This 177-nucleotide RNA was probed chemically with 2A3 and DMS. The data come from the RNA Mapping Database (RMDB), libraries RFM100 and RFMREP. For DMS the reverse transcriptase was MarathonRT. Conditions: 150 mM KOAc, 10 mM MgCl2 and 150 mM bicine (pH 8.5), 24 C. In probing experiments dimethyl sulfate is read out at A N1 and C N3, which are open when not base-paired.

[RMDB]
RNA sequence: GGGAACGACUCGAGUAGAGUCGAAAAAGGGUUCCUUGGCAAUGUUCGUCAGCCAAGGGUUAGUCGAUCCUAAGGUCAGUCAUAAGUUGAGCUGGUCGAAAGGGAAGCAGGUUAAUAUUCCUGUACAAAGCGUUUCUUUAUUCGUAAAGAAACGCUUAAAAGAAACAACAACAACAAC
Reactivity to 2A3 in 0.01 (KOAc 150mM, MgCl2 10mM, bicine 150mM(pH8.5), 24C), signal-to-noise 3, nucleotides 027 to 126: a000g020g010g010u040u080c000c000u000u000g000g000c100a050a050u100g040u060u260c190g110u100c060a300g240c050c000a010a000g000g020g000u010u050a050g040u040c050g050a130u050c000c000u000a060a000g000g020u000c030a000g010u000c010a030u040a300a100g060u050u090g050a040g020c000u010g050g000u020c010g020a150a110a060g010g000g000a100a000g000c020a020g000g000u040u020a050a010u050a120u200u030c000c010u030g010u010a050c080a010
Reactivity to DMS in 0.01 (KOAc 150mM, MgCl2 10mM, bicine 150mM(pH8.5), 24C), signal-to-noise 5, nucleotides 027 to 126: a110g010g000g000u030u010c010c000u000u000g010g020c000a090a090u030g010u010u030c130g010u010c110a220g010c010c000a030a000g000g000g000u020u020a050g000u000c060g010a070u000c000c010u000a100a280g010g020u010c030a000g010u000c020a070u050a130a120g030u010u020g010a190g040c000u000g000g000u020c010g000a060a070a080g010g010g000a070a130g000c030a040g000g000u000u010a050a100u030a170u020u010c000c010u000g000u010a070c190a050